[RMDB]
RNA sequence: GGGAACGACUCGAGUAGAGUCGAAAAAUUCUGGAUAACUAAAUAUGUUAGUAGCUCCAUUUAAUGAUAGAGAAAAAUCUUCUUCUUUCAUAUUUGAGUUCAAAGCAUUUAAAAGCUCAUCUAUAAGGACCUAAUCAGGGUUCGCCCUGAUUAGGUCAAAAGAAACAACAACAACAAC
Reactivity to 2A3 in 0.01 (KOAc 150mM, MgCl2 10mM, bicine 150mM(pH8.5), 24C), signal-to-noise 1, nucleotides 027 to 126: a010u050u070c020u060g010g060a060u040a100a010c020u070a070a040a180u160a080u000g020u040u000a080g060u170a020g040c000u000c060c010a040u000u040u090a150a150u080g000a000u010a010g040a000g140a000a010a000a040a130u190c110u070u000c000u190u000c000u000u080u000c000a000u000a000u030u010u040g050a010g010u040u010c080a050a230a200g000c000a000u100u050u300a150a130a000a000g000c020u000c120a090u020c040u000a040u000a170a000g090